The record gives the reactivity of an RNA of 207 nucleotides to DMS.
For DMS, 3,186 sequencing reads were counted.

[RMDB]
RNA sequence: GGGAACGACUCGAGUAGAGUCGAAAAACGUCCUACUGCUACGGCAGUAGGACGACUCGGACUGGUUCGAAAACUUCCCAGAAUAAAAAACUAAGUGACUACACCAACGCUUACGAGCGUCGGUGAAAAAACAAGGGAGGCUUCGGCCUCCCUUGAACAACUAAGUACUGUUCGCAGUACUUAGUUGAAAAGAAACAACAACAACAAC
Reactivity to DMS in 0.01 (KOAc 150mM, MgCl2 10mM, bicine 150mM(pH8.5), 24C), signal-to-noise 2, nucleotides 027 to 156: a040c040g040u050c010c000u000a000c010u000g000c000u020a090c280g040g030c020a030g030u000a000g000g010a000c000g010a000c140u010c030g000g000a080c020u000g010g000u000u010c000g000a070a080a070a150c090u000u000c000c010c000a260g040a160a120u070a000a090a100a050a060a130c090u010a060a110g010u010g000a200c050u000a230c000a010c000c000a000a000c000g000c010u010u000a180c170g010a080g030c000g020u000c010g000g060u000g000a010a020a080a070a070a050c000a000a040g010g000g000a010g010g010c030u000u010c050g040g010c000c000u000c000c000c010u000u000g000a070a100